[RMDB]
RNA sequence: GGGAACGACUCGAGUAGAGUCGAAAAAGCGUAGCGGUACGCCGCUACGCAAGGCGCAUUUGAACUGUAUUGUACGCCUUGCAUAAAGCAAAAGUACUAAAAAAACGUGCCGUUACCACGGCACGAAAAAACAUCCAUUGGUUCGCCAAUGGAUGAACAGAAGGGUUCAGUUCGCUGAACCCUUCUGAAAAGAAACAACAACAACAAC
Reactivity to 2A3 in 0.01 (KOAc 150mM, MgCl2 10mM, bicine 150mM(pH8.5), 24C), signal-to-noise 1, nucleotides 027 to 156: a010g040c020g020u000a000g000c010g000g030u030a020c260g040c040c000g000c000u000a000c000g030c000a010a010g010g000c000g020c050a120u060u040u190g050a160a110c050u060g070u190a170u110u110g000u010a040c020g010c040c000u000u020g000c020a070u170a300a150a060g020c070a020a000a020a020g040u000a050c130u230a040a050a160a020a000a000a000c030g000u000g000c000c010g000u050u130a100c090c020a020c000g020g000c000a030c010g000a000a000a000a000a000a000c010a000u000c000c000a000u000u010g000g050u040u050c090g020c130c000a000a000u000g000g000a000u010g000a020a000
An RNA of 207 nucleotides, treated with 2A3 and read out base by base.